[RMDB]
RNA sequence: GGGAACGACUCGAGUAGAGUCGAAAAAGCUGCUCAGUAUACGUACUGAGCAGCAAGGGGUUGAAGCGGACACCCCUUCAGGCGCGCGCCCAAGCUCCGUAUGCCGCCUCAUACGUGAGGCGGCGAAAUAGGUGUAUCUGGUUCGCCAGAUACACAACAUGUAGUUGGUCUUCGGACCAACUACAUGAAAAGAAACAACAACAACAAC
Reactivity to 2A3 in 0.01 (KOAc 150mM, MgCl2 10mM, bicine 150mM(pH8.5), 24C), signal-to-noise 1, nucleotides 027 to 156: a000g000c010u000g000c020u000c000a000g000u020a010u000a060c290g030u000a010c030u000g000a010g000c000a000g000c000a010a000g000g000g010g010u070u120g290a280a020g000c000g000g000a000c000a000c000c000c000c000u060u140c060a000g000g000c040g020c020g030c040g010c120c010c020a000a000g020c110u000c000c000g030u020a070u130g000c000c030g000c000c010u010c000a110u100a150c260g090u010g000a000g000g000c000g000g010c000g020a000a000a000u200a030g010g040u000g000u000a000u000c000u000g010g050u000u030c090g100c120c000a000g000a000u010a000c000a000c000a000a000